The data come from the RNA Mapping Database (RMDB), library TTRDES. Structure probing data (DMS and 2A3) for a 177-nucleotide construct. DMS adducts were read by reverse transcription with MarathonRT. 2A3 adducts were read by reverse transcription with SuperScript II with manganese.
RNA sequence: GGGAACGACUCGAGUAGAGUCGAAAAGAUAUGGAUGGAGUAUGGAGAAGCCCUUCGGAAACGAAGGGACUUCUAUGAAGUACUCAUCCUAAGUCAAAAGACAAGUUACGUUCGCGUAACUUGUCAACUAUACGUACUAGUUCGCUAGUACGUAUAGAAAAGAAACAACAACAACAAC
Reactivity to DMS in 0.01 (KOAc 150mM, MgCl2 10mM, bicine 150mM(pH8.5), 24C), signal-to-noise 8, nucleotides 027 to 126: g000a010u000a020u010g000g000a010u000g020g010a030g000u000a000u000g000g000a000g010a010a010g000c000c000c000u000u000c000g020g000a010a010a020c000g010a020a010g010g010g000a010c000u000u000c000u000a300u010g000a130a240g000u000a000c000u000c000a010u000c000c000u000a010a110g000u000c000a120a090a160a140g000a010c000a000a000g010u000u000a010c000g020u000u010c300g020c010g010u000a000a010c000u000u000g000u000c010a020a130
Reactivity to 2A3 in 0.01 (KOAc 150mM, MgCl2 10mM, bicine 150mM(pH8.5), 24C), signal-to-noise 6, nucleotides 027 to 126: g000a000u010a000u040g010g010a000u030g100g080a030g020u010a010u020g010g010a010g000a010a000g010c000c000c000u000u010c000g000g000a030a000a000c000g000a000a000g010g000g000a000c000u000u000c000u050a300u010g000a000a000g010u010a000c000u000c000a000u000c000c000u000a000a000g000u010c010a070a070a070a060g000a000c000a000a000g000u000u000a010c020g010u040u110c300g000c010g140u000a010a000c000u000u000g000u000c000a000a000